[RMDB]
RNA sequence: GGGAACGACUCGAGUAGAGUCGAAAAGGCCGAUUUAGUAUAAGAUCGUCGCUAUAUAUGCUGACGGACACGCGUUACCGGGUCAGCAGAUUCUGAGAUGGUGCCGUUGGUUCGUACGCACAAGAAGGGUGCUCUGGGCGUUCGCGCUCAGGGUACUAAAAGAAACAACAACAACAAC
Reactivity to DMS in 0.01 (KOAc 150mM, MgCl2 10mM, bicine 150mM(pH8.5), 24C), signal-to-noise 9, nucleotides 027 to 126: g010g010c040c010g010a030u000u000u000a130g020u010a120u010a110a090g000a020u000c010g010u010c140g020c030u000a100u010a110u010a110u010g010c000u000g010a020c010g010g000a030c020a050c130g000c060g010u000u000a050c030c010g000g000g000u000c010a020g010c290a130g010a150u010u010c030u000g000a050g010a300u010g000g010u000g010c060c020g010u000u000g010g000u000u000c030g010u000a040c070g010c020a050c190a050a080g000a110a110g010
Reactivity to 2A3 in 0.01 (KOAc 150mM, MgCl2 10mM, bicine 150mM(pH8.5), 24C), signal-to-noise 9, nucleotides 027 to 126: g030g000c020c010g000a010u030u050u110a240g140u170a190u080a300a070g010a030u010c010g080u080c060g000c070u030a030u020a020u010a010u300g010c030u050g010a000c000g000g010a010c020a010c050g060c020g020u020u040a020c010c000g030g030g140u010c000a000g000c060a050g070a240u260u070c010u020g020a040g000a050u070g020g000u010g000c010c010g020u020u060g040g010u010u010c010g000u020a040c030g000c010a020c020a060a050g170a050a050g190